[RMDB]
RNA sequence: GGGAACGACUCGAGUAGAGUCGAAAAGUAUGCAGCUCUUCGGUUUCCUGGCUUUCAUGAUAUUCAUGUGCUGGGUGGGGGACGUGUACCCUGUCUACCAGCCUGUGGGACCAAAGCAGUAUCCUUACAAUAAUCUGUACCUGGAACGAGGCGGUGAGUAAACGCAGGGAUUCGUCCCUGCGUUUACAAAAGAAACAACAACAACAAC
Reactivity to 2A3 in 0.01 (KOAc 150mM, MgCl2 10mM, bicine 150mM(pH8.5), 24C), signal-to-noise 1, nucleotides 027 to 156: g090u020a010u060g090c080a020g000c010u000c210u130u140c010g050g040u020u210u000c000c010u000g010g030c000u150u250u130c080a000u010g090a060u090a130u190u300c010a000u090g040u120g090c010u010g010g000g000u090g000g000g000g000g040a030c060g090u110g020u030a000c020c010c000u010g060u030c000u080a040c010c010a000g030c050c000u040g040u180g060g000g060a040c010c010a000a000a060g000c020a010g000u060a010u030c010c000u040u090a030c020a030a140u200a160a130u000c000u040g000u030a070c000c020u040g010g000a030a060c040g000a010g000g080c010g010g040u030g090a080

Chemical mapping of a 207-nucleotide RNA with 2A3. The RNA was probed in 150 mM KOAc, 10 mM MgCl2 and 150 mM bicine (pH 8.5) at 24 C. The 2A3 profile rests on 469 reads. For 2A3 the reverse transcriptase was SuperScript II with manganese.